An RNA of 207 nucleotides, treated with DMS and 2A3 and read out base by base. Conditions: 150 mM KOAc, 10 mM MgCl2 and 150 mM bicine (pH 8.5), 24 C. DMS adducts were read by reverse transcription with MarathonRT.
[RMDB]
RNA sequence: GGGAACGACUCGAGUAGAGUCGAAAACGGUUACGCCUUCUUUACCGUUAUCAAGGAAGGUACUUGGCCAUGCUAAGGGAAGCAUUAUUCCUUAGGCGCAUGUCGCCGCCAGCAUGGUGUGAGGGGAAAAAGUAUGCUGGGUUCGCCCAGCAUACAAUCAAAUAUGUAGCUUCGGCUACAUAUUUGAAAAAGAAACAACAACAACAAC
Reactivity to DMS in 0.01 (KOAc 150mM, MgCl2 10mM, bicine 150mM(pH8.5), 24C), signal-to-noise 4, nucleotides 027 to 156: c020g020g000u000u000a020c030g020c020c000u000u000c010u000u000u010a030c000c020g020u000u010a030u000c150a040a030g000g020a030a010g000g020u000a030c100u000u000g010g000c000c010a030u000g010c020u010a150a100g010g010g010a050a060g020c160a190u010u000a160u000u000c010c010u010u000a100g040g020c010g040c030a110u000g020u010c040g030c020c000g040c090c090a080g020c010a020u000g010g020u010g000u000g000a050g010g000g020g010a080a050a110a100a170g000u000a000u000g020c010u000g000g000g020u000u010c300g010c020c000c000a010g010c000a000u000a000c000a050a090
Reactivity to 2A3 in 0.01 (KOAc 150mM, MgCl2 10mM, bicine 150mM(pH8.5), 24C), signal-to-noise 8, nucleotides 027 to 156: c010g000g010u020u040a030c060g010c000c010u000u020c010u020u050u050a030c010c010g250u120u100a050u100c060a000a010g020g000a000a000g000g000u020a050c020u040u050g070g000c000c000a000u000g000c010u050a050a080g010g000g010a010a010g030c090a240u090u140a150u140u170c010c010u030u060a080g010g000c010g000c030a150u230g090u300c040g010c040c000g010c020c040a000g000c000a010u000g010g030u070g090u110g050a080g010g010g020g080a030a090a020a030a020g010u000a000u000g000c000u010g000g010g050u020u060c160g070c020c000c000a000g000c000a000u000a000c000a000a000